[RMDB]
An RNA of 177 nucleotides, treated with DMS and 2A3 and read out base by base. 2A3 adducts were read by reverse transcription with SuperScript II with manganese. Conditions: 150 mM KOAc, 10 mM MgCl2 and 150 mM bicine (pH 8.5), 24 C. The data come from the RNA Mapping Database (RMDB), library OK2TRN.
RNA sequence: GGGAACGACUCGAGUAGAGUCGAAAAGUUAACAGAUGAGGAAGUUGAUAAAAAUCAUCAGAGAAGCAAAAUACUGGUAGCGACACUCAAGUAAACCAUGAAAUUUCCAUAACUUAUGUCAGCAAAGUCCUUAGGUAAGAUUCGUCUUACCUAAGGAAAAAGAAACAACAACAACAAC
Reactivity to DMS in 0.01 (KOAc 150mM, MgCl2 10mM, bicine 150mM(pH8.5), 24C), signal-to-noise 7, nucleotides 027 to 126: g000u010u010a060a100c080a080g020a080u000g010a060g000g010a140a100g010u010u010g010a100u020a030a090a060a120a100u000c040a020u000c010a070g010a100g010a080a080g020c070a050a050a070a090u000a060c060u000g010g020u000a080g010c030g010a050c070a050c120u000c060a030a070g010u000a050a080a070c070c040a050u000g010a060a040a110u000u000u000c020c020a080u010a050a070c080u000u000a040u000g010u010c050a080g010c110a070a090a090g020
Reactivity to 2A3 in 0.01 (KOAc 150mM, MgCl2 10mM, bicine 150mM(pH8.5), 24C), signal-to-noise 3, nucleotides 027 to 126: g010u000u020a000a040c030a030g020a100u040g030a020g040g040a110a100g040u120u090g070a070u160a050a200a050a040a020u070c020a000u000c010a010g020a000g010a150a010g040c040a040a010a100a060u100a100c060u010g030g010u040a020g020c010g040a030c030a020c030u050c010a000a080g030u050a080a120a060c030c000a020u080g090a030a060a100u030u080u020c050c000a050u060a110a030c040u110u120a040u170g060u050c020a030g040c010a060a010a200g070